[RMDB]
RNA sequence: GGGAACGACUCGAGUAGAGUCGAAAACUUAGCCAUCCGAGUGGACGUCUGUCCUCCUACGGAUGCCCAGGUCGGACCGCGGGGAGGUGGAGAUGCCAUGCCGACCCGAAGAGGAAAGAAGGACUCGCAGGUGCCUGCUUCGGCAGGCACAAAAGAAACAACAACAACAAC
Reactivity to 2A3 in 0.01 (KOAc 150mM, MgCl2 10mM, bicine 150mM(pH8.5), 24C), signal-to-noise 4, nucleotides 027 to 129: c020u070u070a030g030c010c010a010u000c010c010g020a050g030u020g000g020a020c010g190u190c210u260g000u010c010c000u020c020c030u120a120c010g000g000a000u020g000c000c000c000a030g000g050u040c010g030g020a040c000c000g000c030g000g000g010g000a040g000g020u070g030g000a060g010a030u090g080c050c030a060u130g030c000c020g010a040c010c000c010g010a030a000g000a030g040g000a080a020a010g030a000a020g020g000a040c020u030c050g040c030a010g000